[RMDB]
An RNA of 207 nucleotides, treated with 2A3 and DMS and read out base by base. It was measured as part of the RMDB library OK3TST.
RNA sequence: GGGAACGACUCGAGUAGAGUCGAAAAGACAUGAAAUUUGGGUGGAGACACAGAUCCAAACCAUAUCAGAUAGUAAUAGCACCUAGCUUGUUCAGUUGUUAGGAGAUUAAUGAGAAUGUGUGACCAGCACAUAGUAUUAACUGGUAGCUCUUACUAAAUAUGGGUACUCAUUCGUGAGUACCCAUAUAAAAGAAACAACAACAACAAC
Reactivity to 2A3 in 0.01 (KOAc 150mM, MgCl2 10mM, bicine 150mM(pH8.5), 24C), signal-to-noise 1, nucleotides 027 to 156: g030a020c010a060u100g060a010a140a030u080u060u010g040g000g000u020g000g100a050g010a000c100a000c020a150g070a060u030c020c060a060a000a040c070c030a000u000a010u060c030a010g040a150u040a030g060u020a020a100u010a170g030c000a040c030c000u000a020g000c020u060u050g000u100u120c080a130g010u050u030g000u060u030a000g020g110a110g000a110u200u210a040a060u130g020a040g100a180a100u130g000u000g030u030g080a100c080c000a010g040c040a050c020a010u010a010g090u090a120u170u070a100a030c000u000g000g000u000a020g000c000u000c060u120u080a020c000u240a070a020
Reactivity to DMS in 0.01 (KOAc 150mM, MgCl2 10mM, bicine 150mM(pH8.5), 24C), signal-to-noise 2, nucleotides 027 to 156: g000a090c080a060u000g020a110a030a070u000u010u000g020g030g050u000g000g010a160g040a220c120a120c100a110g040a080u010c030c030a110a110a110c020c040a070u000a060u000c010a140g050a140u000a050g030u020a050a080u010a100g020c030a140c000c030u000a060g000c000u010u010g000u000u010c120a120g020u010u010g000u010u010a100g000g000a130g000a100u000u000a080a090u010g000a170g010a100a070u040g010u000g050u020g000a170c120c130a120g020c020a100c080a060u000a100g000u010a130u010u000a130a060c010u010g010g030u000a070g020c030u000c040u000u000a080c050u010a020a080
The reactions ran in a buffer of 150 mM KOAc, 10 mM MgCl2 and 150 mM bicine (pH 8.5), at 24 C.